The record gives the reactivity of an RNA of 177 nucleotides to DMS and 2A3. The RNA was probed in 150 mM KOAc, 10 mM MgCl2 and 150 mM bicine (pH 8.5) at 24 C. DMS (dimethyl sulfate) methylates the pairing face of unpaired adenines and cytosines.

RNA sequence: GGGAACGACUCGAGUAGAGUCGAAAAGGACAGGGAGGGAGGUGUCAGUCACUCCCCAAAGCGGGAAGAUCAUAUCUUCAUGGGAAUCAUACAAGAGCGGGGGUGAGACCGGACUGUGAGAGCUGGCGAAGGAGAGUACCUUCGGGUACUCUCCUUCAAAAGAAACAACAACAACAAC
Reactivity to DMS in 0.01 (KOAc 150mM, MgCl2 10mM, bicine 150mM(pH8.5), 24C), signal-to-noise 2, nucleotides 027 to 126: g000g000a020c030a170g000g000g000a060g000g000g030a130g040g010u000g010u000c080a090g010u000c040a050c010u010c070c000c040c070a000a080a060g010c090g000g000g000a030a000g000a010u000c220a000u030a300u000c010u020u000c000a040u060g040g000g030a150a020u020c160a160u030a100c170a150a070g010a080g000c020g000g010g010g000g020u000g010a010g020a060c080c090g000g010a040c080u020g020u000g000a090g000a100g020c020u000g000g000c210
Reactivity to 2A3 in 0.01 (KOAc 150mM, MgCl2 10mM, bicine 150mM(pH8.5), 24C), signal-to-noise 1, nucleotides 027 to 126: g070g010a010c040a010g030g000g010a150g060g000g000a000g050g000u060g030u020c000a000g010u060c090a000c200u070c000c000c000c000a060a040a000g050c070g170g010g020a000a000g000a000u060c110a040u120a100u070c010u010u000c010a130u120g000g030g030a090a070u210c010a090u190a210c060a130a100g010a030g080c020g020g000g000g030g010u030g000a010g070a070c070c020g030g040a020c000u050g010u030g040a120g000a020g030c020u000g010g000c020

Annotation: The data come from the RNA Mapping Database (RMDB), library OK1LIB. 2A3 adducts were read by reverse transcription with SuperScript II with manganese.